[RMDB]
RNA sequence: GGGAACGACUCGAGUAGAGUCGAAAAGAUUUAAACAGAUAGAGAUACACAAAUGUUUGAAUCCCAGUAACAAAAAUCCUGGUAUCUCGGGUAUACAGUAGUGCAGAUACUGUAUUUUUAAUGCUCCUUAGGUUUUCCAUCUUCGGAUGGAAAACAAGAAUGUCUUUACCUUCGGGUAAAGACAUUCAAAAGAAACAACAACAACAAC
Reactivity to 2A3 in 0.01 (KOAc 150mM, MgCl2 10mM, bicine 150mM(pH8.5), 24C), signal-to-noise 1, nucleotides 027 to 156: g020a000u040u030u090a000a000a000c010a000g110a050u210a020g000a020g000a000u040a010c060a010c020a000a300a040u060g010u000u020u060g010a020a050u010c000c020c000a070g050u170a130a080c070a070a120a020a000a110u050c000c000u010g000g000u010a020u000c000u000c000g000g000g000u010a000u000a000c000a000g000u040a020g090u080g300c070a010g070a160u040a040c000u000g000u000a000u000u000u000u040u060a240a160u250g000c020u180c070c050u000u050a020g090g080u000u000u000u000c010c010a000u000c000u010u000c160g150g000a000u000g010g000a020a000a000a000c000a000a010